Structure probing data (2A3 and DMS) for a 177-nucleotide construct. Conditions: 150 mM KOAc, 10 mM MgCl2 and 150 mM bicine (pH 8.5), 24 C. High 2A3 reactivity points to a flexible backbone, as in loops and unpaired stretches.
RNA sequence: GGGAACGACUCGAGUAGAGUCGAAAAGAUAUGGAGAUCCUCGUGAACUACGACCAAUGGGUCGGAAACGACCCUAGGUCGCACGAGGGAUCUCCUAAGUCAAAACAGUCAGGUUCGCCUGACUGAACCUAUUAUAACCCUUCGGGGUUAUAAUAGGAAAAGAAACAACAACAACAAC
Reactivity to 2A3 in 0.01 (KOAc 150mM, MgCl2 10mM, bicine 150mM(pH8.5), 24C), signal-to-noise 4, nucleotides 027 to 126: g000a020u090a050u170g000g010a000g000a000u000c010c010u010c020g000u000g030a150a100c180u230a060c300g010a010c000c020a090a110u300g000g000g000u000c030g020g000a070a050a030c010g000a010c000c060c000u000a020g010g000u010c010g000c020a000c010g020a110g060g010g000a010u000c000u000c000c000u000a030a000g020u000c020a000a000a150a230c000a010g000u000c000a000g010g100u050u100c240g140c070c000u010g010a010c000u000g010a010a000
Reactivity to DMS in 0.01 (KOAc 150mM, MgCl2 10mM, bicine 150mM(pH8.5), 24C), signal-to-noise 4, nucleotides 027 to 126: g000a050u010a300u000g000g020a000g000a010u000c000c000u000c010g020u000g010a150a070c190u000a300c050g000a020c010c000a210a190u010g010g010g010u000c010g000g000a050a100a260c030g000a010c000c010c020u010a170g010g000u000c000g020c030a010c000g000a040g010g030g000a010u000c000u000c010c000u000a010a020g000u010c050a040a120a130a260c010a010g000u000c000a010g000g010u000u010c290g020c000c000u000g000a010c000u000g000a040a100